[RMDB]
RNA sequence: GGGAACGACUCGAGUAGAGUCGAAAACGACGGGCGUUAUCUGCGUAACGGCCCCAACCCGGUCGCGGAGGUCGACCCGGCCACCUACCACUGGUUCACCGGCGACGCCAUGGUGCACGGAGUCGCGCACCCUUUGGUUAUUCGUAACCAAAGGGUGAAAAGAAACAACAACAACAAC
Reactivity to 2A3 in 0.01 (KOAc 150mM, MgCl2 10mM, bicine 150mM(pH8.5), 24C), signal-to-noise 6, nucleotides 027 to 126: c070g090a030c020g020g010g020c010g010u030u060a060u070c090u150g060c060g100u070a160a080c000g230g030c000c030c000c010a040a090c010c000c020g020g010u050c020g000c030g030g090a050g030g080u080c020g030a250c010c010c000g010g020c000c010a030c000c010u080a100c020c050a080c110u060g030g030u090u050c050a040c080c030g060g010c020g010a020c010g010c030c010a110u170g120g000u120g060c050a020c090g020g010a030g010u020c010g000c000g030
Reactivity to DMS in 0.01 (KOAc 150mM, MgCl2 10mM, bicine 150mM(pH8.5), 24C), signal-to-noise 6, nucleotides 027 to 126: c160g010a100c140g010g000g010c010g010u010u000a040u000c050u000g010c160g010u010a070a050c050g030g000c040c030c020c100a070a090c120c010c050g000g010u000c010g030c050g000g000a060g010g010u000c040g000a130c090c020c020g010g010c030c060a060c050c010u000a110c090c060a110c110u000g010g010u010u000c090a080c070c020g000g000c030g000a070c080g000c020c030a130u010g000g020u000g010c080a100c080g000g000a070g010u000c020g020c080g000